[RMDB]
RNA sequence: GGGAACGACUCGAGUAGAGUCGAAAAAGGGGUACGGACCUCAGCUGAAUCAUGGGAGCUGAAUGUAUGUGUGUCUCUGCCCUCCUGCAUGUGGCAGGUUGAUGGGGAGCACUUACAUGAGACUGGUAGUUUAGGAGUAGUUCGCUACUCCUAAACUAAAAGAAACAACAACAACAAC
Reactivity to DMS in 0.01 (KOAc 150mM, MgCl2 10mM, bicine 150mM(pH8.5), 24C), signal-to-noise 3, nucleotides 027 to 126: a070g000g000g010g000u020a090c090g020g010a140c050c050u010c020a030g020c020u000g030a130a110u010c090a080u000g020g020g010a050g000c040u010g010a110a030u010g010u000a010u000g000u000g000u000g020u000c010u000c020u010g000c170c000c020u000c020c010u010g010c020a240u000g010u010g030g010c000a000g000g010u000u010g010a030u010g000g010g010g000a300g010c000a010c000u000u000a000c010a000u000g000a170g000a130c070u000g010g020u010
Reactivity to 2A3 in 0.01 (KOAc 150mM, MgCl2 10mM, bicine 150mM(pH8.5), 24C), signal-to-noise 3, nucleotides 027 to 126: a000g020g000g000g010u090a030c060g030g080a020c010c030u040c020a020g000c000u070g050a090a070u120c090a150u180g040g020g100a030g020c020u000g030a100a020u000g020u000a020u020g010u000g000u040g300u010c000u030c000u030g040c000c000c000u000c000c010u000g000c030a100u300g050u170g300g010c000a010g000g060u020u010g000a030u020g000g000g000g000a000g000c010a020c020u030u000a010c000a010u040g010a020g050a110c030u060g050g030u050

Structure probing data (DMS and 2A3) for a 177-nucleotide construct. For 2A3 the reverse transcriptase was SuperScript II with manganese. For 2A3, 2,803 sequencing reads were counted.